RNA sequence: GGGAACGACUCGAGUAGAGUCGAAAAGGGACUGGCCCGAUGAAGCCCGGCAACCUAACUUUAUUUAAGCGUAAAGUGAAGAUGCUAAUUCCAGCAAAAUGGUGUAUUCCGUUUUGGUAGAUAAGAGAAGCGUGACAUGAGUUCGCUCAUGUCACAAUCGCUAAUACUCGUUCGCGAGUAUUAGCGAAAAAGAAACAACAACAACAAC
Reactivity to DMS in 0.01 (KOAc 150mM, MgCl2 10mM, bicine 150mM(pH8.5), 24C), signal-to-noise 2, nucleotides 027 to 156: g030g010g000a110c020u010g030g030c000c050c030g030a210u000g050a150a120g020c000c010c080g030g000c010a060a090c050c010u000a200a010c000u020u000u010a000u000u000u010a090a210g030c300g060u010a010a020a040g000u000g000a080a110g010a190u000g000c040u000a060a180u000u010c010c010a070g000c020a010a000a010a030u010g020g020u010g030u000a100u010u000c000c040g030u010u000u010u010g000g000u000a030g000a040u000a100a000g030a140g010a090a130g020c160g040u000g000a010c000a020u000g010a050g010u000u010c300g000c010u000c000a000u000g030u000c010a000c000a000a030
Reactivity to 2A3 in 0.01 (KOAc 150mM, MgCl2 10mM, bicine 150mM(pH8.5), 24C), signal-to-noise 3, nucleotides 027 to 156: g020g000g000a010c030u040g020g060c040c020c020g000a040u130g070a050a050g010c000c000c000g000g000c030a040a080c000c010u030a020a030c020u080u000u050a080u070u210u130a190a070g130c070g040u010a000a010a040g010u020g090a040a010g010a030u040g010c000u010a060a050u160u050c000c010a010g000c010a030a020a000a050u020g000g000u050g040u190a130u120u080c030c040g000u010u020u020u020g040g020u090a080g050a180u170a170a080g080a020g040a160a050g150c070g030u010g000a000c000a000u000g000a000g030u020u100c120g020c060u000c000a000u000g000u000c000a000c000a000a000
An RNA of 207 nucleotides, treated with DMS and 2A3 and read out base by base. The 2A3 profile rests on 1,477 reads. The DMS profile rests on 2,886 reads. Source: RMDB library M2RFPK, as collected in RNAgym.